[RMDB]
Structure probing data (DMS and 2A3) for a 177-nucleotide construct.
RNA sequence: GGGAACGACUCGAGUAGAGUCGAAAAACUUUCGCAUGUGUCGCUUGCGGGGGUGGCUUUUGGGUUGGUUUUAAAUGUGAAUCCCAGUGUGACAACGCUUAUUGUAGUAGUCAUUGCGGCGCUCGGAGAGGAAAAUAGGUUUCGACCUAUUUUCCUCAAAAGAAACAACAACAACAAC
Reactivity to DMS in 0.01 (KOAc 150mM, MgCl2 10mM, bicine 150mM(pH8.5), 24C), signal-to-noise 3, nucleotides 027 to 126: a080c070u000u000u000c030g020c040a040u000g010u000g020u000c080g020c020u010u000g020c040g010g000g020g020g000u000g000g000c090u000u000u000u000g020g010g020u000u000g000g010u010u000u000u000a030a070a080u010g010u000g000a120a110u010c010c010c010a120g040u000g010u010g010a060c050a090a060c060g000c040u000u000a120u010u010g010u010a070g000u000a070g000u010c010a090u000u010g010c030g010g000c070g020c120u000c070g000g010a280
Reactivity to 2A3 in 0.01 (KOAc 150mM, MgCl2 10mM, bicine 150mM(pH8.5), 24C), signal-to-noise 1, nucleotides 027 to 126: a000c030u070u100u000c010g020c030a000u020g050u030g040u030c010g010c040u020u050g070c060g000g020g010g000g030u010g020g070c000u140u110u130u050g000g000g010u020u070g020g080u080u060u040u190a110a140a070u200g030u000g120a000a030u060c010c010c010a030g030u130g050u090g040a040c020a060a040c050g000c040u160u110a180u270u170g050u070a090g020u000a010g030u060c010a010u030u140g040c050g010g000c000g000c050u040c020g000g000a100

2A3 adducts were read by reverse transcription with SuperScript II with manganese.